[RMDB]
RNA sequence: GGGAACGACUCGAGUAGAGUCGAAAAGCUGAGAUAAGGAGACCACUCUUUCUGGUGGACGCCCUUAAUGCCUUCGGGAGUUUACAUCUCAUUCUUCAAAAUGUACCACUCGGCCUAUAAGGAAAGCCAGGAUUGUAAAUGCAUUUGCUCACGUGGACACUUACUACAUGUUCGCAUGUAGUAAGUGAAAAGAAACAACAACAACAAC
Reactivity to 2A3 in 0.01 (KOAc 150mM, MgCl2 10mM, bicine 150mM(pH8.5), 24C), signal-to-noise 9, nucleotides 027 to 156: g020c040u030g030a010g010a120u100a080a050g050g010a050g030a060c010c010a040c020u090c040u040u230u070c110u150g020g000u030g020g020a060c040g070c010c000c010u030u070a080a030u100g020c010c000u050u090c080g030g040g000a040g020u100u100u090a050c030a060u030c030u020c040a100u160u040c040u140u080c040a040a050a030a080u060g020u050a050c020c030a040c060u040c030g020g000c000c010u150a160u060a220a050g090g000a100a030a000g020c020c010a020g010g040a080u080u120g060u140a030a090a080u070g030c020a050u050u050u130g020c030u040c020a050c070g030u060g030g020a020
Reactivity to DMS in 0.01 (KOAc 150mM, MgCl2 10mM, bicine 150mM(pH8.5), 24C), signal-to-noise 3, nucleotides 027 to 156: g020c270u010g000a070g030a160u000a100a050g000g020a150g000a120c040c020a040c020u010c070u010u000u000c100u010g030g040u010g020g010a110c040g000c040c000c020u000u000a050a080u010g020c020c030u010u000c140g050g010g010a060g010u000u010u000a070c070a090u000c020u000c020a130u010u000c050u000u010c070a070a040a090a080u000g040u000a090c040c020a080c030u000c030g010g000c010c000u000a120u010a070a160g050g000a090a080a110g010c010c030a070g050g010a110u000u000g020u000a040a060a150u010g000c040a080u000u010u000g020c000u000c030a060c090g030u000g000g020a300
Source information
An RNA of 207 nucleotides, treated with 2A3 and DMS and read out base by base. The data come from the RNA Mapping Database (RMDB), library OK3TST. Reactivities are given for positions 27 through 156. Conditions: 150 mM KOAc, 10 mM MgCl2 and 150 mM bicine (pH 8.5), 24 C. For 2A3, 9,567 sequencing reads were counted. For DMS, 8,407 sequencing reads were counted.